[RMDB]
RNA sequence: GGGAACGACUCGAGUAGAGUCGAAAAGGCCUUUGCAGAACAUGGGCUGCAGCAGUUCCACAAAGAUCCGCGGCCGCAUGUGUCGCUGAUGUGGGCGCUCGGCAGCACGAGUCAGCGCUUAGUCACGCCGAUAAGGGCUAUUCGUAGCCCUUAUCGGAAAAGAAACAACAACAACAAC
Reactivity to 2A3 in 0.01 (KOAc 150mM, MgCl2 10mM, bicine 150mM(pH8.5), 24C), signal-to-noise 3, nucleotides 027 to 126: g050g040c000c010u030u020u150g050c090a040g020a130a030c010a100u090g030g070g020c000u000g000c010a010g000c000a030g020u270u020c020c000a040c020a040a300a010g240a080u020c050c030g000c010g000g010c000c050g140c180a170u250g140u100g000u020c000g030c030u020g010a020u030g030u050g010g000g010c020g000c030u050c080g150g000c000a020g040c020a000c060g020a030g040u000c060a010g040c010g000c110u020u030a020g000u010c020a010c110g020
Reactivity to DMS in 0.01 (KOAc 150mM, MgCl2 10mM, bicine 150mM(pH8.5), 24C), signal-to-noise 3, nucleotides 027 to 126: g010g000c040c020u010u010u000g010c030a080g000a120a100c030a050u000g000g010g000c020u010g010c040a050g000c110a100g010u010u000c020c010a060c050a100a080a080g000a130u000c030c120g010c000g010g000c000c000g000c210a090u020g010u020g050u000c000g020c020u000g000a060u000g000u000g000g010g000c010g020c030u010c170g020g010c000a030g000c030a030c060g000a140g020u000c030a060g030c070g000c020u010u000a140g010u010c090a110c110g020
Overview:
The record gives the reactivity of an RNA of 177 nucleotides to 2A3 and DMS. 2A3 adducts were read by reverse transcription with SuperScript II with manganese. Conditions: 150 mM KOAc, 10 mM MgCl2 and 150 mM bicine (pH 8.5), 24 C. The DMS profile rests on 2,425 reads. Reactivities are given for positions 27 through 126.